An RNA of 177 nucleotides, treated with 2A3 and read out base by base.
Reactivities are given for positions 27 through 126.
The data come from the RNA Mapping Database (RMDB), library OK1LIB.
For 2A3 the reverse transcriptase was SuperScript II with manganese.
RNA sequence: GGGAACGACUCGAGUAGAGUCGAAAAGCAACCGUCUCCCGAACGGGCCGGGUCUCGAGGUCGAUCCCGUAGUCGAACGCGUAUCGGUCGCGGACGCCGCACUCGAGGUCCUCGGCGGCGGGAUCGAGCGUGCGUACGCCUUCGGGCGUACGCACGCAAAAGAAACAACAACAACAAC
Reactivity to 2A3 in 0.01 (KOAc 150mM, MgCl2 10mM, bicine 150mM(pH8.5), 24C), signal-to-noise 1, nucleotides 027 to 126: g060c010a040a040c000c000g020u000c000u000c120c030c000g060a050a020c000g000g080g000c000c000g000g000g000u020c000u060c010g120a050g000g060u000c000g030a120u080c000c000c010g010u070a010g130u000c000g010a230a000c150g040c100g160u180a120u160c000g000g040u140c060g000c080g060g000a110c140g010c210c060g000c080a000c000u040c000g010a010g020g150u300c000c120u070c010g000g000c050g000g020c000g000g020g010a030u000c020g000a010